[RMDB]
RNA sequence: GGGAACGACUCGAGUAGAGUCGAAAAGACGCCUAAUGGCGAAAAUGUAAAAUCAACUACACACCAGAUAAAUACAAAUGCUAAAUCUCGUAACUAGUUGAUCUAGUCCAGCGGUGAGAUCCGCAGAGCUGAUCAGUCAUUUCGAUGACUGAUCAGCAAAAGAAACAACAACAACAAC
Reactivity to 2A3 in 0.01 (KOAc 150mM, MgCl2 10mM, bicine 150mM(pH8.5), 24C), signal-to-noise 2, nucleotides 027 to 126: g000a010c010g060c000c010u180a300a050u300g000g000c060g060a090a070a000a000u240g000u090a010a050a020a110u000c000a000a000c000u030a000c020a000c000a010c040c010a000g040a060u130a140a090a000u190a040c120a050a160a010u250g120c050u040a000a190a000u010c000u000c000g000u010a060a070c000u000a040g000u000u000g020a060u000c040u050a050g070u020c000c070a000g000c000g010g020u010g070a100g050a060u060c010c000g000c030a000g030a020
Reactivity to DMS in 0.01 (KOAc 150mM, MgCl2 10mM, bicine 150mM(pH8.5), 24C), signal-to-noise 1, nucleotides 027 to 126: g010a240c000g000c000c000u010a200a110u060g110g020c000g010a000a000a000a000u060g030u000a020a010a000a060u000c000a040a000c000u000a060c070a030c300a010c000c190a200g000a000u110a000a060a190u030a230c130a000a080a030u060g030c080u140a000a070a040u000c040u000c300g030u000a050a300c300u000a000g010u010u000g000a060u000c000u000a010g000u040c060c090a020g030c000g040g000u010g060a000g000a000u060c010c050g000c040a090g020a020
Annotation:
The record gives the reactivity of an RNA of 177 nucleotides to 2A3 and DMS. The reactions ran in a buffer of 150 mM KOAc, 10 mM MgCl2 and 150 mM bicine (pH 8.5), at 24 C. 2A3 adducts were read by reverse transcription with SuperScript II with manganese. Reactivities are given for positions 27 through 126.